Structure probing data (2A3 and DMS) for a 177-nucleotide construct. For DMS the reverse transcriptase was MarathonRT. The DMS profile rests on 8,197 reads. Conditions: 150 mM KOAc, 10 mM MgCl2 and 150 mM bicine (pH 8.5), 24 C.
[RMDB]
RNA sequence: GGGAACGACUCGAGUAGAGUCGAAAACGGAAACAGGAUGGGAAGGCGGGAUCAUGCACCACUCGAAAGUCAGGAGACCUACCUGUUGAUGACUCUCGCGAAAUCCUUCGGGGAAAGGAUGGCGUUAAUAAAUGGGACCUUUCGAGGUCCCAUUUAUAAAAGAAACAACAACAACAAC
Reactivity to 2A3 in 0.01 (KOAc 150mM, MgCl2 10mM, bicine 150mM(pH8.5), 24C), signal-to-noise 4, nucleotides 027 to 126: c030g030g040a050a030a030c040a040g050g030a120u090g040g020g030a070a030g050g000c050g030g000g010a030u120c010a020u100g020c010a080c040c010a070c060u020c040g050a130a050a000g060u080c040a040g010g090a080g020a050c000c020u050a060c010c010u030g020u070u080g010a010u040g040a030c020u030c010u010c030g000c020g010a050a000a030u020c070c020u060u060c070g180g000g000g080a070a010a000g000g010a010u040g040g000c020g020u040u090a110
Reactivity to DMS in 0.01 (KOAc 150mM, MgCl2 10mM, bicine 150mM(pH8.5), 24C), signal-to-noise 4, nucleotides 027 to 126: c060g010g010a190a060a050c070a040g020g000a110u000g000g020g010a100a090g000g020c030g000g020g000a090u020c080a060u000g000c030a090c050c030a070c050u000c100g010a070a060a100g000u040c050a060g000g020a100g020a140c030c060u000a100c090c020u000g000u000u000g000a220u020g010a070c070u000c010u010c040g010c030g000a040a080a040u020c010c010u000u010c050g020g020g020g010a100a030a010g010g010a020u000g010g010c040g020u010u020a070
For 2A3, 2,778 sequencing reads were counted.